[RMDB]
RNA sequence: GGGAACGACUCGAGUAGAGUCGAAAAGAUAUGGAUCAUACCGGCGACUGUGUUCGUCGAAGAACCCAUGAGAUUCGGAAACGAAUCUCAUGGGGGAGACGACACAGCCGUGUAUGAUCCUAAGUCACCUAAAUAAUAUGUUCGCAUAUUAUUUAGGAAAAGAAACAACAACAACAAC
Reactivity to DMS in 0.01 (KOAc 150mM, MgCl2 10mM, bicine 150mM(pH8.5), 24C), signal-to-noise 4, nucleotides 027 to 126: g000a050u000a300u010g000g010a000u000c000a010u000a010c010c300g020g020c060g010a080c160u010g020u000g010u010u000c000g020u000c000g000a060a160g010a190a300c000c000c000a010u010g000a000g000a010u000u000c000g010g010a110a100a270c000g010a010a000u000c000u000c000a000u000g000g000g000g000g010a040g010a010c000g010a030c000a000c000a050g010c000c000g030u010g020u010a000u000g010a010u000c000c000u010a010a070g010u000c060a210
Reactivity to 2A3 in 0.01 (KOAc 150mM, MgCl2 10mM, bicine 150mM(pH8.5), 24C), signal-to-noise 3, nucleotides 027 to 126: g040a020u110a030u200g000g010a000u010c010a000u000a010c010c020g050g040c110g240a220c250u110g000u030g130u300u300c020g010u030c000g000a050a040g030a020a010c020c010c000a000u020g010a000g000a020u020u010c000g050g030a100a140a110c030g010a000a010u010c020u010c000a000u000g000g010g000g000g010a010g000a010c010g000a010c000a010c010a030g000c000c000g000u050g000u000a000u000g000a000u000c000c000u000a000a000g000u010c020a050